An RNA of 177 nucleotides, treated with 2A3 and DMS and read out base by base. For DMS the reverse transcriptase was MarathonRT. Values are in units of 0.01, from 0 to 300, in steps of 10. For 2A3, 855 sequencing reads were counted. The DMS profile rests on 1,600 reads. The data come from the RNA Mapping Database (RMDB), library RFMREP.
[RMDB]
RNA sequence: GGGAACGACUCGAGUAGAGUCGAAAAUGUUAUGAUUGCAAGGUUCGAAACUUAAUAAAUACCCUAGCGCUUAAAGACACUCACCACCCGCAAAAAUAUCCCCGGGCUAGUCUUUUGUGGGGUUUUGCAGUAUAGAUUAGUUCGCUAAUCUAUACUGAAAAGAAACAACAACAACAAC
Reactivity to 2A3 in 0.01 (KOAc 150mM, MgCl2 10mM, bicine 150mM(pH8.5), 24C), signal-to-noise 1, nucleotides 027 to 126: u120g010u130u060a150u160g100a110u160u110g000c060a080a040g070g000u050u140c060g120a050a040a090c060u070u070a090a070u050a180a270a060u090a050c020c000c020u000a040g010c010g030c040u020u000a100a000a070g050a010c000a010c020u060c000a050c030c000a020c000c040c010g000c020a000a060a000a110a110u030a110u030c000c010c050c000g010g000g100c020u040a040g040u040c030u070u110u140u100g070u090g020g070g020g000u010u000u030u110g050
Reactivity to DMS in 0.01 (KOAc 150mM, MgCl2 10mM, bicine 150mM(pH8.5), 24C), signal-to-noise 2, nucleotides 027 to 126: u000g020u000u000a050u000g000a120u000u000g030c070a050a130g000g000u000u000c090g010a090a120a070c060u010u000a080a080u000a040a070a150u020a080c050c010c010u000a100g030c090g030c070u000u000a050a050a090g000a080c030a090c100u000c120a090c080c070a110c010c020c030g030c040a010a050a030a080a080u010a050u000c030c000c030c060g000g010g030c100u000a070g000u000c030u000u000u000u010g000u000g010g000g010g010u000u000u000u010g010